[RMDB]
RNA sequence: GGGAACGACUCGAGUAGAGUCGAAAAGGCUCCACCUUCGGGUGGAGCCAUCUACCGAGAAAGCACCUCGGUAUAAAACUGCAACCCUUGGAAACAAGGGAAUAAGCCCCUGGUUCGCCAGGGGCAAACUUAGAUGGUUAUUCGUAACCAUCUAAGUAAAAGAAACAACAACAACAAC
Reactivity to DMS in 0.01 (KOAc 150mM, MgCl2 10mM, bicine 150mM(pH8.5), 24C), signal-to-noise 3, nucleotides 027 to 126: g010g010c000u000c000c010a000c000c000u010u000c180g060g000g030u000g010g000a000g020c020c000a010u000c040u000a140c000c010g010a010g020a120a090a180g010c140a070c220c010u000c020g000g000u010a010u000a040a030a040a060c200u010g000c120a120a180c000c000c000u000u000g000g000a150a110a190c000a000a000g000g010g010a080a040u010a090a150g000c020c000c000c000u010g000g000u000u000c170g010c020c000a000g000g000g010g010c010a000a010
Reactivity to 2A3 in 0.01 (KOAc 150mM, MgCl2 10mM, bicine 150mM(pH8.5), 24C), signal-to-noise 2, nucleotides 027 to 126: g000g000c000u010c000c000a010c000c020u020u110c270g030g000g000u000g000g000a000g010c000c010a000u010c000u000a000c000c000g010a010g010a040a250a020g080c030a050c080c000u010c010g000g040u000a000u030a000a020a000a000c060u110g040c050a090a140c000c000c000u000u000g010g020a020a070a040c000a020a010g000g000g060a000a010u040a030a000g020c000c000c000c000u000g000g090u040u060c240g080c060c000a000g010g000g020g000c010a000a000